[RMDB]
RNA sequence: GGGAACGACUCGAGUAGAGUCGAAAAUGGACUUUUUACAGUUCCUACUUAUCCGGUUUUAACGCUGUUUUAUUGGCGCAAAGGUUUACGGAUAAACAACUAAUUAUUAAACCUUUUGUGUGCGAAAAUUGGACGUUUAGGUUCGCCUAAACGUCAACAACGUUAGCUAGUUCGCUAGCUAACGUUGAAAAGAAACAACAACAACAAC
Reactivity to 2A3 in 0.01 (KOAc 150mM, MgCl2 10mM, bicine 150mM(pH8.5), 24C), signal-to-noise 3, nucleotides 027 to 156: u080g010g010a020c030u070u120u150u150u180a090c160a050g000u060u080c010c010u000a050c030u020u030a010u010c000c000g020g030u000u000u000u030a050a030c020g010c040u020g190u140u120u060u160a170u190u230g050g010c020g000c000a020a000a000g010g020u010u010u010a000c010g020g000a000u010a070a070a000c060a030a010c050u110a080a170u080u110a040u070u130a040a000a000c010c000u010u020u090u110g080u020g020u040g050c090g060a030a080a090a210u110u120g110g020a000c000g000u010u000u000a010g000g020u030u020c210g080c030c000u010a000a000a000c000g000u000c000a000a000
Reactivity to DMS in 0.01 (KOAc 150mM, MgCl2 10mM, bicine 150mM(pH8.5), 24C), signal-to-noise 1, nucleotides 027 to 156: u030g010g020a150c030u000u030u000u000u000a120c080a060g000u010u000c000c040u000a080c150u010u000a050u000c010c000g000g040u000u000u000u020a180a050c020g010c000u010g020u000u010u000u000a130u030u000g010g020c030g030c020a010a050a040g140g040u020u000u000a190c000g010g000a040u000a020a030a180c030a080a150c070u000a050a120u000u010a160u030u000a030a030a010c000c000u000u000u000u010g000u000g000u010g050c050g000a070a060a050a160u000u000g010g010a010c000g000u000u000u000a010g010g000u000u040c300g040c000c000u000a000a000a020c000g030u000c000a030a110
Source: RMDB library M2RFPK, as collected in RNAgym.
This 207-nucleotide RNA was probed chemically with 2A3 and DMS.
The DMS profile rests on 2,502 reads.
For DMS the reverse transcriptase was MarathonRT.
The RNA was probed in 150 mM KOAc, 10 mM MgCl2 and 150 mM bicine (pH 8.5) at 24 C.